[RMDB]
RNA sequence: GGGAACGACUCGAGUAGAGUCGAAAAGAUAUGGAGAUCAGCUUGGACCUAUAAGUGUCGGAAACGACACAUAGCUAGCUGGCUCCUAAGUCAAAGCUACGUGAUUGCUUCGGCAAUCACGUAGCAAGAAGAUAGUUGGGUUCGCCCAACUAUCUUCAAAAGAAACAACAACAACAAC
Reactivity to DMS in 0.01 (KOAc 150mM, MgCl2 10mM, bicine 150mM(pH8.5), 24C), signal-to-noise 2, nucleotides 027 to 126: g010a020u000a300u010g000g010a010g010a100u020c000a000g000c010u000u000g040g010a170c300c000u010a030u000a050a090g000u000g000u010c000g010g000a050a050a130c000g000a000c000a010c020a010u010a010g010c050u010a020g010c010u000g010g000c020u000c000c000u000a010a080g020u000c040a080a100a170g010c000u000a000c000g020u000g000a030u000u000g020c020u000u020c160g030g000c000a000a000u000c000a000c000g040u000a000g000c010a010a020
Reactivity to 2A3 in 0.01 (KOAc 150mM, MgCl2 10mM, bicine 150mM(pH8.5), 24C), signal-to-noise 2, nucleotides 027 to 126: g050a020u050a050u130g020g010a020g030a300u090c000a010g060c020u200u290g090g090a300c030c010u070a080u010a290a070g000u000g000u000c000g000g000a050a040a010c010g010a000c000a000c000a020u000a000g030c010u000a000g000c000u010g000g030c000u000c010c000u000a100a000g020u000c080a120a020a130g000c010u000a000c010g010u000g000a020u020u000g000c010u050u120c300g100g000c000a000a000u010c010a000c000g010u000a000g000c000a010a000